[RMDB]
RNA sequence: GGGAACGACUCGAGUAGAGUCGAAAAACCAGACACAGGCAUCGCCGAAGUAGUUGGGGUGACGCGUCCAGGCCCACAGGCCGCGGUCCAUGAUGACCCCGCGAUUGGCCGGGUCGGAUUUGAAUACAUAGCAUCUAUUGUUCGCAAUAGAUGCUAUAAAAGAAACAACAACAACAAC
Reactivity to DMS in 0.01 (KOAc 150mM, MgCl2 10mM, bicine 150mM(pH8.5), 24C), signal-to-noise 6, nucleotides 027 to 126: a130c010c000a170g000a080c090a050c120a100g000g010c030a050u000c060g020c020c060g010a080a160g010u000a120g010u010u020g000g010g010g020u010g010a070c070g000c060g000u000c010c000a110g020g000c010c010c080a120c180a100g010g000c010c010g000c040g000g000u020c030c080a100u030g030a170u050g020a080c030c140c020c120g010c040g010a090u020u040g010g010c030c090g000g000g020u000c010g000g020a090u020u030u010g020a050a080u020a090c250
Reactivity to 2A3 in 0.01 (KOAc 150mM, MgCl2 10mM, bicine 150mM(pH8.5), 24C), signal-to-noise 5, nucleotides 027 to 126: a000c000c000a020g050a020c120a000c010a030g090g000c020a070u030c080g040c050c010g040a160a030g030u150a030g000u050u180g020g000g000g010u020g030a030c000g010c010g050u010c030c030a080g030g020c020c040c000a080c030a020g020g010c010c000g030c000g030g010u000c030c010a100u240g040a120u150g060a140c020c000c020c020g000c030g070a220u100u140g040g000c010c000g020g010g020u000c010g000g010a000u040u100u150g120a100a030u150a090c100
This 177-nucleotide RNA was probed chemically with DMS and 2A3. For 2A3 the reverse transcriptase was SuperScript II with manganese. The data come from the RNA Mapping Database (RMDB), library OK1LIB. DMS adducts were read by reverse transcription with MarathonRT. For 2A3, 3,885 sequencing reads were counted. Values are in units of 0.01, from 0 to 300, in steps of 10. The DMS profile rests on 11,251 reads.